[RMDB]
RNA sequence: GGGAACGACUCGAGUAGAGUCGAAAAAGCGAGGACAUGGCUGUACGCAGCCAGGUCCUCGCAAAGGUAGACGGCUGGCACCUUAUAAGUUCAGUCAAUACAAAGUAAACAAGGAGCCUAGUAUGAACAAACCGUGGUGCGUUCGCGCACCACGGAAUCUUAUUGCAUAGUUCGCUAUGCAAUAAGAAAAAGAAACAACAACAACAAC
Reactivity to 2A3 in 0.01 (KOAc 150mM, MgCl2 10mM, bicine 150mM(pH8.5), 24C), signal-to-noise 1, nucleotides 027 to 156: a000g020c010g010a010g000g020a000c030a020u020g010g080c030u000g030u030a040c200g000c130a000g020c040c000a010g020g010u000c000c000u000c000g000c000a000a000a000g010g000u030a100g090a210c090g000g010c020u010g000g020c010a010c000c010u230u170a100u100a300a020g020u090u010c000a000g000u000c020a000a000u070a010c010a020a100a050g110u150a030a070a030c100a070a010g090g050a010g020c000c030u030a000g020u010a110u210g080a110a010c070a140a050a010c020c000g000u000g000g000u000g000c010g000u030u040c090g000c020g000c040a020c040c000a000c010g010g000a000a000
Chemical mapping of a 207-nucleotide RNA with 2A3. 2A3 adducts were read by reverse transcription with SuperScript II with manganese. The data come from the RNA Mapping Database (RMDB), library M2RFPK. The RNA was probed in 150 mM KOAc, 10 mM MgCl2 and 150 mM bicine (pH 8.5) at 24 C.